[RMDB]
RNA sequence: GGGAACGACUCGAGUAGAGUCGAAAAGCACGUAGGUUCAGAUGAUGGGCCCGCAUCCGUACGAAAGUAGGACGAAAGUCAAGCCUACGUGCAUGAGCACGCGGGCCCCGUGCUCUACUGCAAAAGACCCUGCCUAAUCCUUCGGGAUUAGGCAGGGAAAAGAAACAACAACAACAAC
Reactivity to 2A3 in 0.01 (KOAc 150mM, MgCl2 10mM, bicine 150mM(pH8.5), 24C), signal-to-noise 2, nucleotides 027 to 126: g010c020a000c000g000u000a010g000g020u120u170c110a050g010a120u050g000a000u040g030g020g000c000c000c000g000c030a010u000c000c000g080u090a030c020g080a190a050a070g070u110a070g060g050a030c000g070a230a010a030g020u020c060a120a000g000c000c010u000a000c000g000u000g000c000a030u010g000a000g000c000a000c000g000c020g020g000g080c000c000c000c000g030u000g020c000u000c000u000a030c060u060g170c080a010a010a010a010g060a020
Source: RMDB library OK1LIB, as collected in RNAgym. The record gives the reactivity of an RNA of 177 nucleotides to 2A3.